[RMDB]
An RNA of 177 nucleotides, treated with 2A3 and DMS and read out base by base. DMS adducts were read by reverse transcription with MarathonRT.
RNA sequence: GGGAACGACUCGAGUAGAGUCGAAAAUCUCCGAAUGGGCGAACCCGCCAGGAGAUGUCCUGGCAUCCCCCUUGGGAACUCAUACCUUGGGGGAGGACAACCCGGGGAACUGAAACAUCUAAGUACCUCUAGAUACGGAGUUCGCUCCGUAUCUAGAAAAAGAAACAACAACAACAAC
Reactivity to 2A3 in 0.01 (KOAc 150mM, MgCl2 10mM, bicine 150mM(pH8.5), 24C), signal-to-noise 4, nucleotides 027 to 126: u010c020u000c000c000g030a110a080u110g000g010g030c050g050a050a100c000c010c060g000c000c020a000g000g020a090g000a020u050g050u110c000c000u000g000g000c010a130u050c000c010c010c000c000u000u020g030g010g020a090a080c040u060c200a100u170a180c000c000u010u000g000g000g070g000g000a000g010g000a030c050a070a050c020c000c010g000g010g000g000a030a030c020u070g080a130a130a050c030a060u030c020u080a080a020g040u040a120c000c010
Reactivity to DMS in 0.01 (KOAc 150mM, MgCl2 10mM, bicine 150mM(pH8.5), 24C), signal-to-noise 3, nucleotides 027 to 126: u000c010u020c010c020g010a130a130u020g010g000g010c050g000a050a170c040c050c120g040c020c020a180g000g000a090g020a110u000g010u030c000c000u000g010g000c060a300u000c000c000c000c010c010u040u000g030g000g000a150a100c300u000c150a050u030a170c020c000u000u020g030g010g030g030g010a010g000g010a090c090a200a210c120c020c010g000g020g000g010a120a060c090u010g000a090a080a130c130a050u000c030u030a050a050g000u010a080c090c070
The reactions ran in a buffer of 150 mM KOAc, 10 mM MgCl2 and 150 mM bicine (pH 8.5), at 24 C. 2A3 adducts were read by reverse transcription with SuperScript II with manganese. Source: RMDB libraries RFM100 and RFMREP, as collected in RNAgym. The 2A3 profile rests on 3,395 reads.